[RMDB]
RNA sequence: GGGAACGACUCGAGUAGAGUCGAAAAGGAGACUAUUGUCAAGACAGAUGGCAUAUUGCCAGCAUAUAAUAUGGGUAUGGAAGUAACUCAACAAGACUUUUCAUACGUAUGGGGAAUUUUAAGAACACUACUUCCGGGACAAGCAUUUGUCCUAAGACGGAAAAUACUAGUUCGCUAGUAUUUUCCGAAAAGAAACAACAACAACAAC
Reactivity to 2A3 in 0.01 (KOAc 150mM, MgCl2 10mM, bicine 150mM(pH8.5), 24C), signal-to-noise 5, nucleotides 027 to 156: g080g000a040g010a020c050u060a060u170u140g030u080c060a040a050g040a060c030a030g100a100u030g000g000c030a040u050a180u200u250g010c010c010a020g000c040a040u130a010u080a200a110u110a090u130g100g000g000u010a010u040g010g000a010a010g020u070a100a050c020u020c150a030a070c040a110a070g040a060c000u090u070u080u100c060a020u030a070c060g110u050a060u060g050g020g020g020a030a050u090u090u120u160a140a040g040a100a020c030a000c080u140a040c010u140u020c100c060g000g000g010a010c010a020a020g070c100a200u030u060u070g010u000c000c010u020a040a000g040a020
Reactivity to DMS in 0.01 (KOAc 150mM, MgCl2 10mM, bicine 150mM(pH8.5), 24C), signal-to-noise 2, nucleotides 027 to 156: g010g040a180g020a140c070u000a050u020u000g020u000c040a100a120g000a070c080a190g000a090u000g000g020c030a140u010a070u000u000g020c020c010a040g010c060a100u020a110u000a050a080u010a120u000g000g000g030u000a100u010g020g020a000a010g000u010a070a090c080u010c150a060a130c190a100a120g000a080c010u000u000u010u010c040a050u000a070c070g020u000a030u000g010g000g010g020a070a040u020u000u000u020a050a170g040a040a110c110a050c060u000a050c040u000u000c030c050g010g010g030a070c030a000a080g010c110a130u010u000u000g000u000c000c000u000a030a090g000a210